[RMDB]
RNA sequence: GGGAACGACUCGAGUAGAGUCGAAAACGCCGUAAACGAUGCGCACUAAAUCGGUGCCGGUCUGACCCGGUAUCGGUCGACGUGAAAACGAUAAGUGCGCCGCCUGGGGAGUACGGUCGCAAGGCUAUCUCCUUUAAAAGUUCGCUUUUAAAGGAGAAAAAGAAACAACAACAACAAC
Reactivity to DMS in 0.01 (KOAc 150mM, MgCl2 10mM, bicine 150mM(pH8.5), 24C), signal-to-noise 6, nucleotides 027 to 126: c120g020c020c020g020u000a040a120a140c080g000a140u010g010c000g010c000a010c010u000a070a130a020u000c000g020g020u000g010c010c010g010g010u000c150u010g020a120c250c010c010g000g010u000a010u000c020g020g010u000c080g010a110c050g000u010g000a100a080a140a030c010g010a110u010a110a070g020u000g010c010g020c000c090g010c060c050u000g020g000g000g000a120g000u010a030c050g000g010u000c060g040c150a100a090g010g010c070u000a120
Reactivity to 2A3 in 0.01 (KOAc 150mM, MgCl2 10mM, bicine 150mM(pH8.5), 24C), signal-to-noise 4, nucleotides 027 to 126: c020g040c020c010g070u070a070a050a020c040g040a140u140g000c000g000c010a000c010u060a020a070a050u040c000g000g000u010g000c000c010g020g020u070c240u240g140a120c020c010c000g000g010u010a010u020c010g020g000u030c040g060a080c030g040u040g060a070a040a020a000c010g020a050u020a130a050g000u000g000c010g000c000c000g010c000c030u060g000g010g030g000a040g060u030a020c010g010g040u030c010g010c050a060a040g010g000c000u000a060